[RMDB]
RNA sequence: GGGAACGACUCGAGUAGAGUCGAAAAAAGGUGCCAUCAUAUCGGUUAAGAACUCUUAACUCUGAUGCCUUUCGAGUUAUGUGGUGCAUUGAAGCUCUCCCUUCAAAUGGUCGUACAGUUCCGUGAAUACUCUGAGCAUAUUCGUAUGCUCAGAGUAAAAAGAAACAACAACAACAAC
Reactivity to DMS in 0.01 (KOAc 150mM, MgCl2 10mM, bicine 150mM(pH8.5), 24C), signal-to-noise 5, nucleotides 027 to 126: a030a030g010g010u010g020c110c020a030u000c060a060u010a060u010c100g000g000u000u000a030a040g000a180a140c300u010c000u000u000a030a040c010u000c070u010g010a030u000g000c090c040u010u000u000c060g000a070g000u000u000a040u000g020u000g010g020u000g000c040a070u010u000g010a050a060g010c080u000c080u000c030c070c010u000u000c060a030a070a070u000g000g010u000c050g010u000a060c110a100g010u000u000c010c010g010u000g010a100a140
Reactivity to 2A3 in 0.01 (KOAc 150mM, MgCl2 10mM, bicine 150mM(pH8.5), 24C), signal-to-noise 3, nucleotides 027 to 126: a000a000g070g010u050g050c070c020a030u050c010a020u100a030u140c070g050g000u020u030a040a010g050a220a160c040u030c020u210u030a000a020c000u000c040u090g020a040u040g020c010c040u040u060u050c080g030a070g040u070u080a060u120g050u080g040g010u040g010c040a040u000u100g040a050a010g000c010u000c010u020c020c040c000u010u010c030a070a060a080u070g010g010u030c020g010u020a040c020a090g020u040u020c010c020g040u060g110a030a030